[RMDB]
RNA sequence: GGGAACGACUCGAGUAGAGUCGAAAACAGGUCGAUAGUACCAAUAACCCUGGUACCAAUAAGGUACUAUCGACCAUUUAGCUCUUCUUCUACAACACGCUCGCUGAAGAAGAGCAUUUCAGGUACCAGGGAAGCGAGCGCAAGGCCGAGAGGCCGACCUAAUAGGCCAGUUCGCUGGCCUAUUAGGAAAAGAAACAACAACAACAAC
Reactivity to 2A3 in 0.01 (KOAc 150mM, MgCl2 10mM, bicine 150mM(pH8.5), 24C), signal-to-noise 2, nucleotides 027 to 156: c010a010g030g000u010c010g010a010u000a000g020u000a000c050c040a040a120u210a110a070c000c000c000u010g000g010u020a010c000c060a060a120u200a230a080g000g000u000a000c000u000a000u000c000g000a000c000c010a010u030u020u080a020g000c010u000c000u000u000c000u020u000c050u090a090c050a210a060c060a030c140g000c000u000c000g000c020u050g000a000a000g000a000a010g000a010g000c000a000u040u160u070c020a020g010g000u030a000c000c000a000g000g000g000a000a010g000c000g000a000g000c000g000c090a090a110g000g000c000c000g080a040g000a030g090g000c000c000g010a000
This 207-nucleotide RNA was probed chemically with 2A3. It was measured as part of the RMDB library OK3TST. The reactions ran in a buffer of 150 mM KOAc, 10 mM MgCl2 and 150 mM bicine (pH 8.5), at 24 C.